[RMDB]
RNA sequence: GGGAACGACUCGAGUAGAGUCGAAAAUUUCGACGACACGUUCAAUGCCACCCCGAUUCCUGCGCCGAUGUCUGCUGGUAUUGUUCGUGGCCCGCGUUUGGUGCCGGGUGCGCAGGUGUCGGAUGGUAUUCACUUUUGUGUUCGCACAAAAGUGAAUAAAAGAAACAACAACAACAAC
Reactivity to 2A3 in 0.01 (KOAc 150mM, MgCl2 10mM, bicine 150mM(pH8.5), 24C), signal-to-noise 2, nucleotides 027 to 126: u060u030u030c030g010a010c020g020a020c010a020c140g100u120u070c080a110a100u160g000c000c000a070c050c080c000c000g000a000u030u000c000c000u000g030c010g020c000c040g140a110u160g130u090c080u090g120c020u050g030g000u020a040u050u060g050u020u060c050g040u020g040g080c000c000c000g010c000g040u000u030u080g040g000u030g030c030c000g010g030g060u110g030c000g010c020a010g000g000u000g010u030c000g010g010a010u050g020g000u010
Reactivity to DMS in 0.01 (KOAc 150mM, MgCl2 10mM, bicine 150mM(pH8.5), 24C), signal-to-noise 2, nucleotides 027 to 126: u010u000u010c040g020a060c040g020a150c080a080c120g000u010u010c080a100a090u010g010c000c000a070c110c050c030c010g020a040u000u010c000c010u000g000c000g010c010c060g010a120u020g000u010c100u000g010c060u010g020g000u010a030u010u010g000u000u000c060g010u000g010g020c000c020c020g000c060g030u000u010u010g010g000u000g040c020c000g010g000g010u010g010c020g020c010a020g000g010u000g010u000c000g010g000a030u010g010g010u000